This 207-nucleotide RNA was probed chemically with DMS and 2A3. For DMS, 1,381 sequencing reads were counted. Reactivities are given for positions 27 through 156.
[RMDB]
RNA sequence: GGGAACGACUCGAGUAGAGUCGAAAAGGUCAGGCCUGAUCGGAAACAGCAGCAGGUGAGUCCGCCUUAUGUGCAGGAUCGGCUGAAACACGAGGAAAUACUGAGCCAACGCAAGACGGUAGCCGAAAAAAUCUAGUUCACUUCGGUGAACUAGAAACAGUUACGCAAACUUCGGUUUGCGUAACUGAAAAGAAACAACAACAACAAC
Reactivity to DMS in 0.01 (KOAc 150mM, MgCl2 10mM, bicine 150mM(pH8.5), 24C), signal-to-noise 1, nucleotides 027 to 156: g010g030u000c030a150g030g060c070c050u000g010a110u000c010g040g010a250a020a110c050a150g060c000a040g000c070a050g000g050u000g010a160g050u030c010c040g000c000c050u000u000a040u010g060u050g040c000a110g030g000a090u000c020g030g060c030u000g030a080a100a120c030a120c000g030a080g000g000a100a040a140u000a080c050u020g000a100g010c000c030a060a090c050g070c050a210a070g050a070c060g050g060u000a080g010c000c030g000a010a010a150a140a140a120u000c010u000a020g000u000u020c020a020c010u030u000c290g030g000u000g000a030a020c000u000a000g000a020a050a120
Reactivity to 2A3 in 0.01 (KOAc 150mM, MgCl2 10mM, bicine 150mM(pH8.5), 24C), signal-to-noise 2, nucleotides 027 to 156: g010g010u010c020a020g020g080c010c030u110g010a060u050c030g020g100a080a040a060c040a010g090c000a010g010c010a010g090g050u010g060a050g080u000c040c020g000c010c000u170u060a110u090g050u040g040c020a040g000g040a030u030c030g000g000c020u000g000a090a030a000c040a010c040g040a040g040g060a060a000a090u110a090c040u070g010a000g010c010c000a030a000c030g000c030a000a080g040a010c030g050g000u080a040g040c010c000g010a060a000a000a020a000a000u000c000u000a000g000u000u010c010a040c020u050u050c160g050g000u000g000a000a000c000u000a000g010a000a000a000
Conditions: 150 mM KOAc, 10 mM MgCl2 and 150 mM bicine (pH 8.5), 24 C.